[RMDB]
RNA sequence: GGGAACGACUCGAGUAGAGUCGAAAAAGGGCAGGGUGAAAUUACCGAUCGGCGGUAAAGUCCGCGAGCCGAACGAAAAAGGUUUGGCAGGAACCGGUGAGAUUCCGGUACCGACAGUAUAGUCUGGAUGACCACUUCAGCUUCGGCUGAAGUGGAACAGCCUAUCAAUCUUCGGAUUGAUAGGCUGAAAAGAAACAACAACAACAAC
Reactivity to 2A3 in 0.01 (KOAc 150mM, MgCl2 10mM, bicine 150mM(pH8.5), 24C), signal-to-noise 1, nucleotides 027 to 156: a000g070g010g020c060a050g020g000g040u070g030a020a080a130u110u010a070c020c030g040a060u040c000g000g010c010g020g000u000a000a010a000g010u000c000c000g010c000g000a010g000c010c000g010a000a000c010g110a080a060a080a060a030g130g020u000u000u000g000g000c010a000g030g000a000a000c000c000g000g030u010g000a010g000a000u010u000c000c010g000g000u010a000c010c000g000a000c000a000g020u030a030u060a080g020u030c020u000g040g060a070u150g120a070c000c000a000c000u000u000c000a020g000c030u060u120c250g110g000c010u000g000a000a010g010u000g010g000a000a000
Reactivity to DMS in 0.01 (KOAc 150mM, MgCl2 10mM, bicine 150mM(pH8.5), 24C), signal-to-noise 1, nucleotides 027 to 156: a040g000g000g030c050a120g020g010g020u000g000a050a070a130u000u000a000c010c000g000a120u000c000g030g000c000g000g010u020a110a130a070g000u010c000c000g000c020g010a300g000c000c000g050a010a100c000g030a070a130a160a220a250g010g010u000u000u000g000g050c000a050g010g000a000a030c000c010g030g030u000g020a260g000a300u000u000c030c000g000g000u010a000c010c010g010a070c020a070g000u000a060u010a140g000u000c020u000g010g030a110u000g000a170c000c000a020c000u000u000c000a010g030c010u000u020c260g100g010c010u010g010a000a010g020u000g010g010a030a060
This 207-nucleotide RNA was probed chemically with 2A3 and DMS. The data come from the RNA Mapping Database (RMDB), library M2RFPK. The reactions ran in a buffer of 150 mM KOAc, 10 mM MgCl2 and 150 mM bicine (pH 8.5), at 24 C. Values cover nucleotides 27 to 156. Values are in units of 0.01, from 0 to 300, in steps of 10. The 2A3 profile rests on 1,348 reads. For DMS the reverse transcriptase was MarathonRT.